[RMDB]
RNA sequence: GGGAACGACUCGAGUAGAGUCGAAAAGCAUACAACUUCGGUUGUAUGCAACGUCAGAGUUGACUGUCAUAAACAACGUAACAUGUGAGUUACAAUAACACAUUGCAGCAGCUUUCGAGCUGCUGAAUGGUGCUUAACUGUUCGCAGUUAAGCACCAAAAAGAAACAACAACAACAAC
Reactivity to DMS in 0.01 (KOAc 150mM, MgCl2 10mM, bicine 150mM(pH8.5), 24C), signal-to-noise 1, nucleotides 027 to 126: g010c000a000u000a010c000a010a000c000u000u000c150g030g020u000u000g020u000a000u000g000c000a040a010c170g000u000c020a030g000a090g010u000u000g010a050c020u000g020u000c130a090u030a070a070a060c040a040a040c070g000u000a030a030c050a150u000g010u000g000a100g020u000u000a040c060a090a040u000a050a060c010a040c160a040u010u000g000c020a010g000c010a000g000c010u000u000u000c150g000a020g020c000u000g010c020u000g000a000a030
Reactivity to 2A3 in 0.01 (KOAc 150mM, MgCl2 10mM, bicine 150mM(pH8.5), 24C), signal-to-noise 1, nucleotides 027 to 126: g000c000a000u000a000c000a040a000c000u020u020c130g070g010u010u000g000u000a000u000g020c000a030a020c060g030u000c000a000g030a020g000u070u000g090a180c000u010g020u100c020a110u150a090a020a030c010a030a010c040g110u110a030a000c000a030u130g110u110g220a070g070u000u060a000c030a010a100u160a100a030c000a000c000a090u060u210g000c010a000g000c010a000g000c030u040u030u180c260g120a010g000c010u000g000c000u000g010a000a000